[RMDB]
RNA sequence: GGGAACGACUCGAGUAGAGUCGAAAAGGUAAAACGCUGCGGCCCUUCUGGUUCAACGAUGUACGCCUCGGGGGUGCUGACCUCUCCGGCGAGAUCGGCACCCAGCAUCGGGGGUUGGGCAGCCACCACUAAUAGCAGCCUUCGGGCUGCUAUUAGUAAAAGAAACAACAACAACAAC
Reactivity to 2A3 in 0.01 (KOAc 150mM, MgCl2 10mM, bicine 150mM(pH8.5), 24C), signal-to-noise 2, nucleotides 027 to 126: g080g010u120a100a070a010a000c080g020c040u050g030c010g050g020c000c000c000u040u030c050u130g160g050u150u140c050a050a040c040g010a030u010g050u070a070c090g110c050c010u170c100g160g000g000g000g020u010g010c000u010g000a010c000c000u050c000u080c100c080g180g050c070g010a010g000a010u020c000g000g000c000a000c000c020c000a000g000c000a010u050c010g000g020g010g000g070u080u050g050g130g000c010a000g000c000c010a030c010c000
Reactivity to DMS in 0.01 (KOAc 150mM, MgCl2 10mM, bicine 150mM(pH8.5), 24C), signal-to-noise 1, nucleotides 027 to 126: g000g000u000a030a030a090a080c190g040c010u020g010c010g020g000c000c020c040u000u000c050u010g000g010u040u010c000a050a120c030g010a040u000g020u010a060c140g020c060c010u050c100g010g020g000g020g010u010g020c000u000g020a020c090c000u000c030u030c020c120g000g010c110g000a000g000a070u000c000g000g000c020a020c020c000c000a060g000c140a030u010c060g010g000g010g000g000u000u000g020g000g030c040a030g000c000c120a090c060c080

Chemical mapping of a 177-nucleotide RNA with 2A3 and DMS. Values cover nucleotides 27 to 126. It was measured as part of the RMDB library OK1LIB. For 2A3 the reverse transcriptase was SuperScript II with manganese. For DMS the reverse transcriptase was MarathonRT. Conditions: 150 mM KOAc, 10 mM MgCl2 and 150 mM bicine (pH 8.5), 24 C.